[RMDB]
RNA sequence: GGGAACGACUCGAGUAGAGUCGAAAACAUUCACUAUCAAUCGAUAACAAGAUCUUUGAUAUACUAACGGACCCCAUUGAUGACUUUAGUAAAUCAUCCGAUCUAUUGCUGUGUUAUCUUAGAUAUAAAUUCAAUGGGAGCUUAAACUAUUACGUUCUCUGUUCGUAGGUUUCGACCUACGAACAGAAAAAGAAACAACAACAACAAC
Reactivity to 2A3 in 0.01 (KOAc 150mM, MgCl2 10mM, bicine 150mM(pH8.5), 24C), signal-to-noise 1, nucleotides 027 to 156: c060a120u160u160c080a030c110u030a020u030c030a070a040u110c010g000a000u010a050a000c060a030a030g000a020u080c010u000u080u000g000a010u080a000u020a050c010u010a000a100c100g110g050a050c020c000c020c000a010u010u010g000a030u090g010a040c010u010u020u020a000g000u010a010a220a060u000c010a010u000c020c050g030a010u000c010u030a100u180u260g120c090u140g090u000g000u140u000a000u010c000u010u010a010g010a010u000a000u030a100a100a120u050u000c000a000a000u000g000g010g000a040g010c010u140u250a070a110a100c060u150a100u300u200a100c060g030u130u030c030